[RMDB]
RNA sequence: GGGAACGACUCGAGUAGAGUCGAAAAGCAAACCGAAAACGCGAUGCCAUCAUUAGACGUGCCUUCGGUAAAAGCCUGUUUGCUAGCCGGAGAACUAAUGAGCCUGCAGCACUCUUUUACCAGAUACGCCAUCGCACUCAUUCGUGAGUGCGAUGGCAAAAGAAACAACAACAACAAC
Reactivity to 2A3 in 0.01 (KOAc 150mM, MgCl2 10mM, bicine 150mM(pH8.5), 24C), signal-to-noise 1, nucleotides 027 to 126: g090c030a000a190a000c030c030g160a030a030a000a000c060g000c000g070a010u130g040c100c000a120u060c000a030u050u130a050g070a150c140g060u090g020c000c000u120u040c000g000g000u000a030a080a000a090g050c000c020u180g080u090u090u120g010c020u060a160g000c000c080g030g000a100g000a080a050c060u010a030a170u150g030a040g020c000c000u000g040c000a030g070c020a010c000u060c000u070u040u010u000a100c080c000a010g010a080u100a120c080